[RMDB]
RNA sequence: GGGAACGACUCGAGUAGAGUCGAAAAACGGAUGGUACGCCAUCGGACCAUUGGGUAGAAGCGUUCAAUCAGCACCGUGACGGUGCAGAUGGGAAAUUGCCCAUGAUACGCACCAUACGUGGUGCGAAAAAGCCAUCGGUGUUCGCACCGAUGGCAAUCAGUAUUAGGAGUUCGCUCCUAAUACUGAAAAAGAAACAACAACAACAAC
Reactivity to DMS in 0.01 (KOAc 150mM, MgCl2 10mM, bicine 150mM(pH8.5), 24C), signal-to-noise 3, nucleotides 027 to 156: a040c020g000g010a040u000g000g030u000a030c160g010c040c050a070u000c040g010g020a070c020c020a120u000u000g020g010g030u000a070g000a100a110g000c080g020u000u000c030a060a040u000c010a090g010c000a010c010c000g040u000g010a170c200g060g050u000g020c000a010g010a010u000g010g010g010a010a090a100u000u010g020c000c010c020a090u000g010a080u000a060c030g060c000a040c000c010a090u000a050c200g030u000g010g050u000g030c000g000a000a020a040a120a140g000c010c000a010u000c030g040g020u010g010u000u000c300g030c020a030c030c000g010a000u000g010g010c000a000a000
Reactivity to 2A3 in 0.01 (KOAc 150mM, MgCl2 10mM, bicine 150mM(pH8.5), 24C), signal-to-noise 3, nucleotides 027 to 156: a000c090g060g000a010u010g010g030u050a050c220g080c040c010a010u020c030g030g040a040c030c020a110u060u090g030g000g000u030a040g040a170a010g030c020g030u070u070c030a040a070u000c010a020g000c000a000c010c020g120u210g230a110c260g000g000u000g010c000a000g010a000u020g030g000g000a030a100a060u050u030g010c000c000c010a000u040g040a010u040a060c010g000c000a010c000c000a000u040a080c250g070u040g020g010u000g000c000g020a050a010a000a000a000g010c000c000a000u000c000g000g000u020g010u040u080c170g010c100a000c000c010g000a000u010g000g000c000a000a000